Conditions: 150 mM KOAc, 10 mM MgCl2 and 150 mM bicine (pH 8.5), 24 C.
An RNA of 170 nucleotides, treated with 2A3 and DMS and read out base by base.
Values cover nucleotides 27 to 129.
The data come from the RNA Mapping Database (RMDB), library 15KLIB.
For DMS, 45,501 sequencing reads were counted.
For DMS the reverse transcriptase was MarathonRT.

RNA sequence: GGGAACGACUCGAGUAGAGUCGAAAAUGUCUUAAAAGACAAUGUACUUUCUUCUAUGCUUAGAUUGCACACCGUUGAGUCAGGUGAUAUUAACGUUGUUGCAGCUUCCGGAUCUUUGACACGUAAAACAGUAUUCGGUUCGCCGAAUACAAAAGAAACAACAACAACAAC
Reactivity to 2A3 in 0.01 (KOAc 150mM, MgCl2 10mM, bicine 150mM(pH8.5), 24C), signal-to-noise 8, nucleotides 027 to 129: u080g010u000c000u050u140a110a060a020a010g000a010c030a030a050u190g050u110a080c040u030u080u040c010u080u010c050u100a110u110g020c020u070u110a040g030a120u140u110g000c010a000c000a010c030c010g020u010u050g040a070g100u060c060a060g030g180u150g120a030u080a140u100u090a040a020c030g030u000u000g040u050u080g000c030a020g000c000u050u000c010c010g020g030a050u020c060u020u070u090g050a040c050a030c100g090u100a010a080a000a040c040a040
Reactivity to DMS in 0.01 (KOAc 150mM, MgCl2 10mM, bicine 150mM(pH8.5), 24C), signal-to-noise 8, nucleotides 027 to 129: u000g000u000c000u000u050a100a070a130a100g010a050c000a060a080u040g020u040a100c100u010u010u000c030u010u040c060u020a180u000g000c040u030u060a070g020a090u000u000g020c000a060c060a060c050c040g050u000u000g000a060g020u030c010a120g070g010u060g030a050u040a030u010u040a020a040c020g060u000u000g000u020u030g020c000a050g000c040u000u000c020c040g000g000a060u000c030u000u000u000g030a080c170a030c090g050u000a000a030a040a030c140a020